Source: RMDB library OK2TST, as collected in RNAgym.
The record gives the reactivity of an RNA of 177 nucleotides to DMS and 2A3.
RNA sequence: GGGAACGACUCGAGUAGAGUCGAAAAACUGGCUAUUGUUUGAAACUGUUAUGACCUUCUUGCUUAUCAGCUUGCUGGUUUCCUUCUCGGGGCGAGCUGGGUGCCUGGAGUUUUCGGUGAAGGAAAACUGCACUAAAUAGUUCGCUAUUUAGUGCAGAAAAGAAACAACAACAACAAC
Reactivity to DMS in 0.01 (KOAc 150mM, MgCl2 10mM, bicine 150mM(pH8.5), 24C), signal-to-noise 3, nucleotides 027 to 126: a070c050u000g010g010c050u000a060u000u010g010u010u010u000g010a090a070a100c110u000g000u000u010a090u010g000a100c090c030u000u000c030u000u000g000c030u000u000a070u000c040a030g010c020u000u000g010c030u000g010g010u000u000u000c040c020u000u000c060u000c070g010g010g000g020c020g000a020g000c020u000g000g010g020u010g020c040c040u000g010g000a070g010u000u000u010u000c050g010g010u010g010a050a070g000g010a050a050a060a180
Reactivity to 2A3 in 0.01 (KOAc 150mM, MgCl2 10mM, bicine 150mM(pH8.5), 24C), signal-to-noise 2, nucleotides 027 to 126: a000c020u020g080g030c040u080a040u180u200g130u060u100u090g090a100a060a030c050u060g070u270u140a140u130g060a020c020c000u100u090c010u030u080g030c000u100u110a090u180c010a000g030c000u010u040g020c000u070g000g100u020u140u010c020c040u090u060c040u010c070g030g020g000g020c000g010a020g030c000u040g060g000g020u010g000c000c000u000g080g010a070g040u000u010u040u150c060g000g030u130g010a030a030g010g000a020a050a040a070

The reactions ran in a buffer of 150 mM KOAc, 10 mM MgCl2 and 150 mM bicine (pH 8.5), at 24 C.
For 2A3 the reverse transcriptase was SuperScript II with manganese.
2A3 is a SHAPE reagent: it acylates the 2'-hydroxyl of flexible nucleotides of all four kinds.
The DMS profile rests on 6,190 reads.